[RMDB]
RNA sequence: GGGAACGACUCGAGUAGAGUCGAAAAGACCGCUGAAUGCGGAAGUACUAGAUCAACUAGAAAGUAGAUGAAUACAAAAGCUACGUCUCGAAACUAGUUGAUCUAGUUCACUCGAGACGUAGUAAGAACCCUAUGCCGUGUUCGCACGGCAUAGGGUAAAAGAAACAACAACAACAAC
Reactivity to 2A3 in 0.01 (KOAc 150mM, MgCl2 10mM, bicine 150mM(pH8.5), 24C), signal-to-noise 2, nucleotides 027 to 126: g060a000c000c000g000c040u100g300a150a010u280g000c000g030g000a000a100g040u090a100c000u000a000g000a000u000c100a090a010c000u000a000g060a130a100a000g000u120a040g000a180u040g080a280a000u050a070c080a010a130a010a000g030c010u020a000c000g040u010c000u000c000g000a020a020a010c030u020a000g000u000u150g000a010u000c000u000a000g000u000u020c000a000c000u000c000g000a000g050a010c020g010u000a010g050u040a060a100g010a040
Reactivity to DMS in 0.01 (KOAc 150mM, MgCl2 10mM, bicine 150mM(pH8.5), 24C), signal-to-noise 1, nucleotides 027 to 126: g000a180c000c000g110c000u000g030a090a150u080g010c000g040g000a120a030g000u010a210c000u000a000g000a060u000c030a070a030c000u000a050g000a170a190a060g000u040a070g000a080u040g000a210a070u000a030c150a130a070a020a040g050c000u000a000c020g020u000c000u000c010g030a180a060a050c030u000a000g000u000u030g000a010u020c000u040a000g000u000u000c120a000c050u000c020g000a020g000a000c000g030u000a010g000u010a050a160g070a050